RNA sequence: GGGAACGACUCGAGUAGAGUCGAAAAGAUAUGGACGUAAGAGCGAUAAGCUUACGCUCGGAAACGAGCGUCAAGCUUUUGACGCUCGAAGUCCUAAGUCAAAGUAAUUAUGUUCGCAUAAUUACAACGUUGGUGAUCUGUUCGCAGAUCACCAACGAAAAGAAACAACAACAACAAC
Reactivity to DMS in 0.01 (KOAc 150mM, MgCl2 10mM, bicine 150mM(pH8.5), 24C), signal-to-noise 1, nucleotides 027 to 126: g000a010u030a280u000g000g000a010c000g000u030a150a300g010a010g010c000g000a090u000a000a010g010c030u000u000a010c000g000c000u010c000g010g010a050a040a110c000g000a000g010c010g040u000c230a010a010g010c060u000u000u010u000g010a160c080g010c000u000c000g000a050a210g010u000c010c000u000a040a100g000u010c080a080a030a080g000u010a030a010u000u000a000u000g020u010u040c250g010c000a000u000a020a010u000u000a020c000a070a090

The record gives the reactivity of an RNA of 177 nucleotides to DMS. Reactivities are given for positions 27 through 126. For DMS, 871 sequencing reads were counted. For DMS the reverse transcriptase was MarathonRT. The reactions ran in a buffer of 150 mM KOAc, 10 mM MgCl2 and 150 mM bicine (pH 8.5), at 24 C.